[RMDB]
RNA sequence: GGGAACGACUCGAGUAGAGUCGAAAAUUUGGUGACGAUUUGUUUGGUGACUGUUGGUUGAAAGCAGUGACUGAACGACGCUUUCGACUCGGUCUGAAAACUGUAUAAAAGACUCCCCGCCAGUGGGCACACUAAGCUUAUUCGUAAGCUUAGUGUGAAAAGAAACAACAACAACAAC
Reactivity to 2A3 in 0.01 (KOAc 150mM, MgCl2 10mM, bicine 150mM(pH8.5), 24C), signal-to-noise 5, nucleotides 027 to 126: u100u040u070g040g000u040g030a080c100g050a100u090u110u170g040u010u040u030g060g060u060g030a010c010u010g120u200u100g090g050u060u070g060a060a020a010g010c050a020g010u020g080a080c080u090g030a080a040c040g030a020c040g000c000u000u000u010c000g010a000c000u000c040g000g010u000c000u010g000a030a030a010a040c030u040g040u110a170u060a170a150a020a000g070a050c020u000c010c000c000c000g030c020c000a040g050u150g060g030g020
Reactivity to DMS in 0.01 (KOAc 150mM, MgCl2 10mM, bicine 150mM(pH8.5), 24C), signal-to-noise 9, nucleotides 027 to 126: u000u000u000g010g020u010g010a130c110g010a140u010u000u010g010u000u000u000g010g020u010g010a030c010u000g010u010u010g010g010u010u000g010a040a050a020g030c000a110g010u010g010a140c160u010g010a060a150c080g000a070c110g000c020u000u000u000c000g010a010c010u000c020g000g000u000c020u000g000a080a030a030a050c050u000g010u000a120u000a060a080a100a120g000a120c120u000c010c000c010c090g000c050c030a060g020u010g000g000g010

Overview:
The record gives the reactivity of an RNA of 177 nucleotides to 2A3 and DMS. For 2A3, 10,501 sequencing reads were counted. The data come from the RNA Mapping Database (RMDB), library OK2TRN.